[RMDB]
The data come from the RNA Mapping Database (RMDB), library OK2TRN. The record gives the reactivity of an RNA of 177 nucleotides to DMS. The reactions ran in a buffer of 150 mM KOAc, 10 mM MgCl2 and 150 mM bicine (pH 8.5), at 24 C. In probing experiments dimethyl sulfate is read out at A N1 and C N3, which are open when not base-paired. The DMS profile rests on 654 reads.
RNA sequence: GGGAACGACUCGAGUAGAGUCGAAAAUCUUCACCUACCGUGGCAUCGCCAAUGUAGGUCAGGUGUGGCACUUUGGAACCGCGUCCAAUCUGGGCAUUCUUGGCUUCGACGAAGCCACCGAGUUUGCCCUGUCGGAAAGCUUCGGCUUUCCGACAGGAAAAGAAACAACAACAACAAC
Reactivity to DMS in 0.01 (KOAc 150mM, MgCl2 10mM, bicine 150mM(pH8.5), 24C), signal-to-noise 1, nucleotides 027 to 126: u000c040u030u040c080a100c000c000u000a050c020c060g020u000g000g030c050a140u000c230g020c010c020a270a080u000g000u000a060g000g040u000c180a000g000g000u000g050u010g000g000c180a070c080u000u000u020g050g020a030a150c010c050g010c040g010u040c060c050a030a040u000c160u010g050g000g070c020a070u000u000c060u030u000g010g000c030u000u000c030g010a140c250g000a040a030g030c080c050a100c290c160g000a040g030u000u000u000g000c040